[RMDB]
RNA sequence: GGGAACGACUCGAGUAGAGUCGAAAAUAAAAUGGUAAGAACGGUUCCAAAGGAGCCGAAGGUCAUAGCUAUGGCAUCGAUCUAAAAACUUAUCAAUUAGGUGACGAGCUUGGCACUGAUCAAAAAAUCUAUAUCGAGAGUUCGCUCUCGAUAUAGAAAAAGAAACAACAACAACAAC
Reactivity to 2A3 in 0.01 (KOAc 150mM, MgCl2 10mM, bicine 150mM(pH8.5), 24C), signal-to-noise 1, nucleotides 027 to 126: u180a030a070a000a150u110g070g000u090a010a050g030a190a000c050g000g000u000u000c020c000a070a300a100g010g000a010g030c040c060g000a030a030g050g000u000c000a000u060a110g010c010u050a070u230g100g000c020a050u030c010g030a000u050c030u000a000a050a070a080a080c050u070u190a100u150c050a010a180u060u080a000g030g050u020g000a040c010g040a040g000c020u040u020g020g000c050a000c040u050g060a030u080c080a000a190a060a000a000a000
Reactivity to DMS in 0.01 (KOAc 150mM, MgCl2 10mM, bicine 150mM(pH8.5), 24C), signal-to-noise 1, nucleotides 027 to 126: u010a020a040a040a060u000g000g010u010a040a110g010a160a110c020g000g020u000u010c000c000a190a110a210g000g010a030g020c000c010g010a020a010g010g010u000c010a030u000a250g070c050u000a000u020g020g000c000a020u010c130g000a010u000c010u000a010a030a050a070a100c130u000u000a060u000c210a090a090u000u000a040g000g000u000g000a010c030g010a040g000c020u000u010g000g050c000a110c260u010g000a030u040c000a020a010a040a090a070a060